This 207-nucleotide RNA was probed chemically with 2A3 and DMS. The reactions ran in a buffer of 150 mM KOAc, 10 mM MgCl2 and 150 mM bicine (pH 8.5), at 24 C. The data come from the RNA Mapping Database (RMDB), library OK3TST. DMS adducts were read by reverse transcription with MarathonRT.
[RMDB]
RNA sequence: GGGAACGACUCGAGUAGAGUCGAAAAGACAUUAGGCAGACACCCACGCCUGACUUUCAGGAGAAAAGAGAACAUGACUAACGGAUAUUCUUAGUAGAUGGUUUAUUAGAAAAGAGAACAUCUUCCAGCAUGUGUCCUGGGGUGAUGGGUGUGGGAAUAAUAGUGAGCUGUUCGCAGCUCACUAUUAAAAAGAAACAACAACAACAAC
Reactivity to 2A3 in 0.01 (KOAc 150mM, MgCl2 10mM, bicine 150mM(pH8.5), 24C), signal-to-noise 3, nucleotides 027 to 156: g090a000c040a030u060u050a040g030g110c050a010g020a040c010a100c030c000c000a000c000g000c010c000u020g010a020c010u100u300u290c050a010g030g010a050g020a060a150a050a010g090a030g030a070a010c000a010u050g090a120c060u060a150a000c040g020g000a030u030a050u120u070c100u060u080a080g010u070a050g090a120u070g080g080u050u160u160a130u070u090a120g110a040a110a030a010g080a000g010a010a020c020a020u000c000u080u040c040c000a000g000c010a020u000g000u030g020u030c010c000u000g000g000g000g000u030g030a090u110g010g010g000u010g000u000g000g000g000a030a010
Reactivity to DMS in 0.01 (KOAc 150mM, MgCl2 10mM, bicine 150mM(pH8.5), 24C), signal-to-noise 2, nucleotides 027 to 156: g040a110c010a080u010u000a030g000g000c040a090g020a110c050a190c000c000c010a140c070g000c010c000u010g020a080c060u040u000u000c000a040g000g010a150g000a080a060a110a220g000a230g000a090a030c020a020u000g000a240c020u010a040a110c120g050g010a050u000a000u000u000c010u000u010a150g030u000a140g010a110u000g010g020u010u000u030a130u010u000a150g000a090a100a140a260g000a070g000a040a030c010a000u000c000u000u000c100c150a050g010c020a030u010g030u000g030u000c010c010u030g020g000g000g030u000g010a100u000g050g020g030u000g050u000g020g010g020a100a070